[RMDB]
This 177-nucleotide RNA was probed chemically with 2A3 and DMS. For 2A3 the reverse transcriptase was SuperScript II with manganese. The RNA was probed in 150 mM KOAc, 10 mM MgCl2 and 150 mM bicine (pH 8.5) at 24 C. The data come from the RNA Mapping Database (RMDB), library OK2TST.

RNA sequence: GGGAACGACUCGAGUAGAGUCGAAAAAAUUCGUACCAACAUACGGUCAUAGAGUGCUUCGAGGCCGCUGUCUUCGUCUGGGAGUUCAUUGGAGGCCGUCACCAAGAGACGCAUCGGUACGCGCUCACGAGUGAUAGUCAUUCGUGACUAUCACUCGAAAAGAAACAACAACAACAAC
Reactivity to 2A3 in 0.01 (KOAc 150mM, MgCl2 10mM, bicine 150mM(pH8.5), 24C), signal-to-noise 2, nucleotides 027 to 126: a020a000u150u090c020g000u020a040c000c010a040a070c040a070u120a030c040g050g000u000c000a000u070a120g060a010g070u050g010c030u050u080c050g070a050g030g000c010c030g000c050u050g100u030c030u070u090c020g050u010c050u080g080g030g060a050g010u090u060c080a130u180u110g100g060a050g050g030c010c020g010u000c020a030c040c050a080a020g040a010g030a130c030g000c030a020u080c080g000g010u030a000c010g010c020g000c030u040c010a040
Reactivity to DMS in 0.01 (KOAc 150mM, MgCl2 10mM, bicine 150mM(pH8.5), 24C), signal-to-noise 3, nucleotides 027 to 126: a080a050u010u010c060g010u000a060c040c000a100a080c200a160u000a070c070g030g020u000c040a120u010a180g000a060g010u000g010c070u010u000c040g000a100g000g010c020c050g010c150u000g020u000c080u000u010c080g010u010c060u020g000g010g000a060g010u010u000c050a120u000u010g010g010a110g000g010c020c000g010u010c090a100c030c040a030a100g000a130g000a060c080g030c090a070u000c110g000g000u000a030c060g000c220g010c030u000c060a240